[RMDB]
RNA sequence: GGGAACGACUCGAGUAGAGUCGAAAAGUUAUGGAAAACGUCUUAGCUACCACUACAACAACAAUGCUGGACGGUGAUGGUUCGACUUACUCGAAACCAUGACGUAGUGGUAGUCGUUCCCAUUCAAUAGAAGUAAUACUUUCGAGUAUUACUUCUAAAAAGAAACAACAACAACAAC
Reactivity to 2A3 in 0.01 (KOAc 150mM, MgCl2 10mM, bicine 150mM(pH8.5), 24C), signal-to-noise 8, nucleotides 027 to 126: g050u070u060a070u250g140g050a090a090a030a010c010g000u020c040u210u300a070g000c010u060a070c020c070a060c120u210a040c050a190a000c010a040a000c030a100a130u160g000c010u020g020g010a020c050g020g040u030g040a050u100g020g100u020u010c000g010a000c000u010u020a000c000u000c000g030a090a020a020c010c010a010u050g070a080c210g080u150a040g010u080g000g000u010a010g000u000c000g010u000u000c000c000c000a000u060u020c010a020a030
Reactivity to DMS in 0.01 (KOAc 150mM, MgCl2 10mM, bicine 150mM(pH8.5), 24C), signal-to-noise 9, nucleotides 027 to 126: g020u010u000a090u010g010g010a100a090a110a140c030g010u000c010u000u010a060g020c010u000a090c080c060a040c080u010a040c080a080a080c150a070a090c160a060a080u010g010c020u000g010g000a030c040g000g000u000g000a060u000g010g020u000u000c000g000a020c060u000u000a030c050u000c000g000a060a110a050c060c050a030u000g010a120c190g010u000a060g020u000g000g000u000a160g010u000c010g000u000u000c000c000c000a080u000u010c070a060a180

The record gives the reactivity of an RNA of 177 nucleotides to 2A3 and DMS. The data come from the RNA Mapping Database (RMDB), library M2PK90. The RNA was probed in 150 mM KOAc, 10 mM MgCl2 and 150 mM bicine (pH 8.5) at 24 C. DMS adducts were read by reverse transcription with MarathonRT.